[RMDB]
RNA sequence: GGGAACGACUCGAGUAGAGUCGAAAACAGAAGCAAGUCAGCAGCAUCAAAGGCGUCACCCUGCACAACUAUGGCCUCGGCAUCACAGACGGCAUGAUCGAGCUGUCAGACAGCAGGCAGAACAUGAUCUACACACUCUCUUCGGAGAGUGUGUAGAAAAAGAAACAACAACAACAAC
Reactivity to DMS in 0.01 (KOAc 150mM, MgCl2 10mM, bicine 150mM(pH8.5), 24C), signal-to-noise 2, nucleotides 027 to 126: c080a020g040a080a150g010c000a090a160g020u010c040a050g020c000a060g050c120a040u000c140a040a130a120g010g020c010g020u030c100a070c040c010c040u000g000c060a080c050a110a050c070u010a230u020g030g000c030c020u000c050g000g020c060a050u010c010a060c130a140g000a060c080g000g010c030a050u000g010a160u010c090g010a080g020c050u000g000u010c130a060g030a170c090a070g000c060a000g020g020c000a060g000a080a100c120a040u000g020a060
Reactivity to 2A3 in 0.01 (KOAc 150mM, MgCl2 10mM, bicine 150mM(pH8.5), 24C), signal-to-noise 1, nucleotides 027 to 126: c030a060g070a120a000g070c030a000a090g040u080c030a000g000c000a000g030c000a060u020c090a130a060a000g050g020c010g080u090c020a030c000c000c060u080g060c000a020c020a040a090c030u130a020u110g080g030c000c000u000c010g030g000c030a050u030c020a040c050a110g120a030c020g060g000c040a010u090g040a160u210c040g040a070g090c000u020g040u010c000a020g020a080c000a010g100c040a030g050g000c000a030g010a030a000c010a070u120g010a000